[RMDB]
RNA sequence: GGGAACGACUCGAGUAGAGUCGAAAAGCUGCGCCGUACGAUCUAGCGCGGCCGUGCGCUCGUGCGCCUCGGCCUCGAUCGAUCCUCGAGUACCUGAGCGCGUACGUACGAUACGUAGCGCGAUCGAGGAAUAGCCUGAGUUCGCUCAGGCUAUUCCAAAAGAAACAACAACAACAAC
Reactivity to 2A3 in 0.01 (KOAc 150mM, MgCl2 10mM, bicine 150mM(pH8.5), 24C), signal-to-noise 1, nucleotides 027 to 126: g070c040u040g010c040g000c020c010g070u110a040c040g010a080u040c060u100a050g040c020g040c000g000g090c010c030g170u150g010c010g000c000u060c070g070u110g020c020g020c000c000u020c000g000g000c020c000u020c000g020a020u070c060g070a090u130c020c030u010c010g030a010g000u020a070c000c010u040g040a050g020c030g000c010g040u000a020c030g010u040a020c050g030a010u020a200c010g000u030a040g050c020g000c000g020a060u120c030g040a040
Reactivity to DMS in 0.01 (KOAc 150mM, MgCl2 10mM, bicine 150mM(pH8.5), 24C), signal-to-noise 2, nucleotides 027 to 126: g020c030u000g010c040g020c130c040g060u000a070c050g000a070u010c040u020a110g010c020g000c020g000g040c130c200g000u000g020c000g000c040u000c090g020u000g020c000g000c020c030u000c040g000g030c300c000u000c000g020a050u000c070g010a110u000c120c090u000c000g000a000g010u000a110c140c000u010g000a090g000c100g040c000g020u000a020c000g020u000a040c080g010a090u000a020c000g030u000a070g020c010g010c040g020a010u020c030g010a240
Chemical mapping of a 177-nucleotide RNA with 2A3 and DMS. The reactions ran in a buffer of 150 mM KOAc, 10 mM MgCl2 and 150 mM bicine (pH 8.5), at 24 C. For 2A3 the reverse transcriptase was SuperScript II with manganese.